RNA sequence: GGGAACGACUCGAGUAGAGUCGAAAAGAAGAGAGUCGACGCAAGCGACGAUAACUGCGGAACGGUAACCGUAGUACCGUAUGGUCAUGGCACGCGAAAGCGAAAGAGCGAACCAUGCCAUAAGAGAACGUAAAUUAAUGUUCGCAUUAAUUUACGUAAAAGAAACAACAACAACAAC
Reactivity to DMS in 0.01 (KOAc 150mM, MgCl2 10mM, bicine 150mM(pH8.5), 24C), signal-to-noise 9, nucleotides 027 to 126: g010a120a060g000a060g010a240g010u010c010g010a090c070g020c180a100a140g010c030g000a040c030g000a090u030a080a110c040u000g010c010g000g000a100a050c070g010g010u020a040a090c020c030g000u030a030g020u000a040c030c010g010u010a010u000g000g000u040c010a000u000g000g010c300a120c020g010c000g010a100a090a100g010c160g010a070a060a070g000a300g000c020g010a100a150c000c010a000u000g000c000c000a000u000a060a070g000a100g010a110
Reactivity to 2A3 in 0.01 (KOAc 150mM, MgCl2 10mM, bicine 150mM(pH8.5), 24C), signal-to-noise 9, nucleotides 027 to 126: g160a050a010g090a000g020a010g010u020c020g010a120c040g030c150a080a100g060c020g040a030c030g010a050u100a090a040c030u060g020c010g000g030a050a030c030g050g030u090a120a060c010c010g060u050a020g020u000a020c000c010g010u020a000u010g000g020u220c020a000u000g000g000c050a020c070g020c010g080a140a050a050g110c090g070a100a110a060g130a030g020c030g000a020a020c000c000a000u000g000c000c000a010u020a040a040g120a010g040a060